This 170-nucleotide RNA was probed chemically with 2A3 and DMS. The reactions ran in a buffer of 150 mM KOAc, 10 mM MgCl2 and 150 mM bicine (pH 8.5), at 24 C.
[RMDB]
RNA sequence: GGGAACGACUCGAGUAGAGUCGAAAAGCGGGGAGGAGUGUUACCCUACGGGAACUGCUGAGUGCCCCUGACGUCCAGACCCUCCCCCGUCCGGGAGAAUGGAGAUUCGGGAACGUGAAGCAUGGUGGAGGCGUAUACUUCGGUAUACGCAAAAGAAACAACAACAACAAC
Reactivity to 2A3 in 0.01 (KOAc 150mM, MgCl2 10mM, bicine 150mM(pH8.5), 24C), signal-to-noise 9, nucleotides 027 to 129: g070c080g000g010g000g000a020g020g010a090g020u070g060u040u130a170c020c000c010u030a040c050g000g000g030a050a040c030u090g040c030u080g130a040g080u080g040c010c000c000c010u020g040a030c050g090u030c010c000a020g020a070c010c000c000u000c000c000c000c000c000g070u030c040c010g000g010g000a050g000a030a050u110g010g010a050g010a050u050u080c020g000g010g030a050a040c040g060u080g050a030a000g000c060a040u080g040g030u050g020g050a060g040
Reactivity to DMS in 0.01 (KOAc 150mM, MgCl2 10mM, bicine 150mM(pH8.5), 24C), signal-to-noise 9, nucleotides 027 to 129: g040c140g000g010g000g000a000g000g000a070g000u000g040u030u030a110c050c020c030u000a100c210g000g030g020a140a060c080u040g060c080u020g030a090g020u030g000c040c010c000c030u040g000a080c200g010u010c050c030a070g000a120c130c050c000u000c020c020c020c060c060g030u050c060c110g000g030g010a050g000a080a070u010g000g000a090g000a110u010u010c060g010g020g020a100a020c110g010u050g010a070a050g020c080a060u010g000g040u020g000g000a090g030
Source: RMDB library 15KLIB, as collected in RNAgym. The DMS profile rests on 86,325 reads.